[RMDB]
RNA sequence: GGGAACGACUCGAGUAGAGUCGAAAAUAAAUAUAGGGAUUCUGUGAUUUGAAUUACAGUCUACACUAUUGGUACUGUGAGUUGGUAUUUGUAGAUAUUUGAAGCCCUGCUCAGUGACUACCCCAGACAUGGUCAUAAUAUUCGUAUUAUGACCAUGAAAAGAAACAACAACAACAAC
Reactivity to DMS in 0.01 (KOAc 150mM, MgCl2 10mM, bicine 150mM(pH8.5), 24C), signal-to-noise 5, nucleotides 027 to 126: u010a060a100a070u020a100u000a070g010g010g010a050u000u000c020u000g020u000g000a020u000u010u010g010a150a080u000u000a010c010a030g000u000c010u000a100c050a100c090u000a030u000u000g000g010u000a040c040u000g010u000g010a110g000u010u010g010g010u000a040u000u010u000g020u000a050g000a140u010a060u000u000u000g010a160a160g020c050c030c020u000g000c030u000c020a060g000u000g000a080c080u010a150c100c010c010c080a130g000a210
Reactivity to 2A3 in 0.01 (KOAc 150mM, MgCl2 10mM, bicine 150mM(pH8.5), 24C), signal-to-noise 3, nucleotides 027 to 126: u020a000a040a000u230a030u100a060g020g020g060a010u060u010c000u020g000u050g020a050u080u200u300g220a300a130u030u030a020c000a010g000u000c000u080a080c060a010c030u060a040u100u060g030g010u050a030c010u040g050u090g250a130g110u110u140g050g000u050a090u130u070u100g060u040a040g030a210u030a050u150u060u100g040a050a020g010c000c000c000u000g020c020u030c010a030g020u020g090a060c020u050a060c020c020c010c040a020g010a020